Source: RMDB library OK1LIB, as collected in RNAgym. This 177-nucleotide RNA was probed chemically with DMS and 2A3. For 2A3 the reverse transcriptase was SuperScript II with manganese. The DMS profile rests on 1,058 reads. The 2A3 profile rests on 2,306 reads.

RNA sequence: GGGAACGACUCGAGUAGAGUCGAAAACAGCUAUAUGUUUCAUUGGACGCACCUAAUGAGAAAGUCUAUAAUGAGCUUUGCAACCCUCAAAUAGAUGAUGGUUGGGGCAAACUAAACAAAACACUAGCCAGUAUGACCGAUUCGUCGGUCAUACUGGAAAAGAAACAACAACAACAAC
Reactivity to DMS in 0.01 (KOAc 150mM, MgCl2 10mM, bicine 150mM(pH8.5), 24C), signal-to-noise 1, nucleotides 027 to 126: c070a000g000c060u000a060u010a110u000g010u000u000u070c040a150u050u000g000g000a170c080g000c030a090c000c040u010a000a060u050g080a030g000a000a180a190g010u000c010u000a080u000a000a130u000g010a150g010c040u000u000u000g070c120a000a160c110c140c080u000c040a000a110a120u000a000g020a220u060g000a110u120g010g000u000u000g120g000g000g000c060a030a040a090c070u040a000a060a180c170a020a000a010a050c150a030c150u000a040g000
Reactivity to 2A3 in 0.01 (KOAc 150mM, MgCl2 10mM, bicine 150mM(pH8.5), 24C), signal-to-noise 5, nucleotides 027 to 126: c030a000g030c030u110a040u040a070u300g050u020u080u040c030a020u010u080g040g020a020c010g040c080a150c020c030u050a060a050u170g010a060g100a140a070a000g040u000c020u010a130u030a060a170u090g040a000g030c020u050u140u190g040c090a080a080c040c030c000u000c020a110a140a020u140a020g140a070u080g000a040u070g080g010u020u010g000g000g040g000c010a050a080a020c050u130a100a070a020c080a010a110a050a030c170a020c040u050a050g030